[RMDB]
RNA sequence: GGGAACGACUCGAGUAGAGUCGAAAAGAUAUGGAACUCGUGUAUUGAGCUCUGGGUCGGAAACGACCCUGAGCAAUGAUGUACUCGAGUUCCUAAGUCAAAGUGAUCUGAGUUCGCUCAGAUCACACACAUCACACUCGUUCGCGAGUGUGAUGUGAAAAGAAACAACAACAACAAC
Reactivity to DMS in 0.01 (KOAc 150mM, MgCl2 10mM, bicine 150mM(pH8.5), 24C), signal-to-noise 2, nucleotides 027 to 126: g000a010u000a010u020g000g010a020a000c000u000c000g010u000g000u000a010u000u000g040a300g000c000u000c000u000g010g000g030u010c010g020g000a000a010a020c000g000a010c010c000c000u000g010a010g040c010a010a010u000g000a000u010g000u000a000c000u000c010g000a030g000u000u000c000c000u000a000a060g010u000c030a080a140a100g040u010g010a010u000c000u000g010a010g010u000u000c240g000c030u000c000a000g010a000u000c010a000c000a150
Reactivity to 2A3 in 0.01 (KOAc 150mM, MgCl2 10mM, bicine 150mM(pH8.5), 24C), signal-to-noise 1, nucleotides 027 to 126: g000a010u010a010u050g010g010a000a000c000u010c020g030u000g000u020a000u010u050g020a000g000c000u020c020u010g000g020g000u020c000g010g000a010a000a000c000g010a000c010c000c000u000g010a030g000c000a020a000u190g070a070u200g030u000a000c010u000c000g000a000g000u010u010c000c000u000a000a000g000u010c000a010a050a010g000u010g000a000u000c010u010g010a010g030u130u190c300g090c140u010c010a000g000a010u000c000a000c000a000